[RMDB]
RNA sequence: GGGAACGACUCGAGUAGAGUCGAAAAGAUAUGGAUUGUGGGAGCGAACGUGAGUGUCGGAAACGACACUCUCGCGAGGAUCACACGGUCCUAAGUCAAAAGCCCAUUUGCUUCGGCAAAUGGGCAAGUCUUAAUAACCCUUCGGGGUUAUUAAGACAAAAGAAACAACAACAACAAC
Reactivity to DMS in 0.01 (KOAc 150mM, MgCl2 10mM, bicine 150mM(pH8.5), 24C), signal-to-noise 3, nucleotides 027 to 126: g000a010u010a190u000g000g000a020u000u000g000u010g010g010g010a030g010c020g010a150a070c000g010u000g000a020g010u000g020u000c020g000g000a040a030a100c000g010a000c000a010c000u000c010u000c000g040c040g000a280g000g000a090u000c000a020c010a010c000g000g000u000c000c000u000a030a100g000u010c020a080a100a130a130g000c000c000c000a000u000u000u000g010c010u000u020c190g030g000c000a000a010a010u000g000g000g020c010a000a010
Reactivity to 2A3 in 0.01 (KOAc 150mM, MgCl2 10mM, bicine 150mM(pH8.5), 24C), signal-to-noise 2, nucleotides 027 to 126: g000a010u030a020u080g000g010a010u000u030g000u010g020g030g000a050g080c160g180a210a150c030g040u020g000a000g010u000g010u000c000g020g010a010a010a010c000g000a000c000a000c000u000c000u000c000g000c080g070a180g170g170a090u000c000a000c000a000c020g010g000u000c000c000u010a050a000g030u040c040a060a020a080a140g000c010c000c000a000u030u000u010g000c000u030u040c100g170g010c010a000a000a000u000g020g010g000c010a000a000

Notes: Source: RMDB library TTRDEL, as collected in RNAgym. Chemical mapping of a 177-nucleotide RNA with DMS and 2A3. DMS adducts were read by reverse transcription with MarathonRT. The 2A3 profile rests on 5,594 reads. The DMS profile rests on 3,605 reads.